[RMDB]
RNA sequence: GGGAACGACUCGAGUAGAGUCGAAAAUGGAAAUGUGCUAUCAAGCGAUUGAUCAAGGGGCAUCAGGCGUGGAUAUGGGGCGCAAUAUUUUUCAGUCAGAUGCGCCGAUCGCCAUGCUGAAAGCGGAACUCGGCGAUUUAUUCGUAAAUCGCCGAGUAAAAGAAACAACAACAACAAC
Reactivity to DMS in 0.01 (KOAc 150mM, MgCl2 10mM, bicine 150mM(pH8.5), 24C), signal-to-noise 1, nucleotides 027 to 126: u000g010g000a070a120a060u010g000u030g000c040u000a100u000c090a090a070g040c160g000a130u020u000g020a020u010c090a080a120g010g010g000g030c120a050u010c230a230g010g000c040g010u010g000g000a020u000a050u020g000g010g000g010c000g030c000a000a000u000a040u000u000u090u000u020c240a100g010u010c190a050g020a100u000g010c000g050c000c020g000a010u010c100g000c020c030a030u010g010c010u010g020a030a190a110g040c090g010g050a210